[RMDB]
RNA sequence: GGGAACGACUCGAGUAGAGUCGAAAAGUGUUGCAACCCCUUAAGGUGCUUGGCGCGCUGGCGUGCCUGUUGUGCCUUCUCCUGUUACUGCGCGUGCCGUACGGGAUGGGUUAUCGCGCAGGCGCUUCUGAGUGGAAGGCGAAGUUCGCCGAGGCGGUGAUUCGAAAAGGUUCGCCUUUUCGAAUCAAAAAGAAACAACAACAACAAC
Reactivity to 2A3 in 0.01 (KOAc 150mM, MgCl2 10mM, bicine 150mM(pH8.5), 24C), signal-to-noise 2, nucleotides 027 to 156: g040u040g020u000u040g030c010a050a080c040c000c000c060u040u120a090a040g000g000u040g000c060u100u090g020g000c020g010c040g020c130u080g090g010c020g000u010g000c000c010u060g050u060u060g040u070g040c000c000u010u030c020u000c010c000u020g050u070u080a080c000u010g010c040g010c010g050u060g000c010c000g070u070a080c170g040g100g010a070u200g050g030g070u080u130a080u220c030g000c000g000c050a000g050g000c030g070c030u250u130c040u040g040a060g010u100g070g000a000a030g000g000c010g050a010a020g010u060u060c000g000c010c000g030a010g070g000c060g000g020
Record summary
An RNA of 207 nucleotides, treated with 2A3 and read out base by base. Values cover nucleotides 27 to 156. The RNA was probed in 150 mM KOAc, 10 mM MgCl2 and 150 mM bicine (pH 8.5) at 24 C.